[RMDB]
RNA sequence: GGGAACGACUCGAGUAGAGUCGAAAAGAAAGAAAGAAAGAAAUCUGACAGAAUGACGGAUUCGAUCGUUGUGGUCGGCGGGCCACCACGUCAUUCCUUAGCACUGUCUCCGGGCAGACCGCCAUAAAAAAGCGGAUCUACUUCGGUAGAUCCGCAACAUUCAAAAGCUCUUCGGAGCUUUUGAAUGAAAAGAAACAACAACAACAAC
Reactivity to 2A3 in 0.01 (KOAc 150mM, MgCl2 10mM, bicine 150mM(pH8.5), 24C), signal-to-noise 1, nucleotides 027 to 156: g010a000a080a000g070a000a080a000g060a070a210a020g060a060a090a060u100c060u080g030a060c050a040g140a150a300u100g000a080c020g030g060a040u040u040c070g070a100u130c080g040u040u000g000u000g000g000u010c050g010g080c060g030g020g000c010c000a000c000c000a000c000g000u000c010a040u010u070c020c000u060u140a040g040c040a000c040u000g000u010c000u020c020c000g000g000g000c000a030g010a070c000c010g040c000c050a030u290a000a080a050a010a000a000g000c000g000g000a000u000c000u010a000c010u030u030c100g090g000u000a000g010a010u000c000c000g000c000a000a000